Structure probing data (DMS) for a 177-nucleotide construct. Values cover nucleotides 27 to 126. For DMS the reverse transcriptase was MarathonRT. It was measured as part of the RMDB library M2PK90.
RNA sequence: GGGAACGACUCGAGUAGAGUCGAAAAUUAAACCUUCCAUCCAUCCAAUAAGACUGACUCAGUCAAUAAGGAUGGAUGGAGGAUCCCAAUAUGACUGAGUCAGUCAGAAAAGCGGAAACGCAAAAAAUCUGGAAGAAUAGUUCGCUAUUCUUCCAGAAAAAGAAACAACAACAACAAC
Reactivity to DMS in 0.01 (KOAc 150mM, MgCl2 10mM, bicine 150mM(pH8.5), 24C), signal-to-noise 1, nucleotides 027 to 126: u000u000a040a120a200c260c010u000u000c000c030a000u000c000c000a010u000c010c000a200a150u000a060a100g010a060c020u000g010a050c060u010c000a030g010u000c020a050a080u010a030a030g030g000a030u000g000g000a000u000g000g010a010g020g010a040u010c020c010c000a070a130u010a130u000g020a010c000u000g010a070g000u000c030a040g010u000c010a090g020a070a050a090a160g010c000g010g010a020a150a160c040g040c000a000a030a170a130a010a050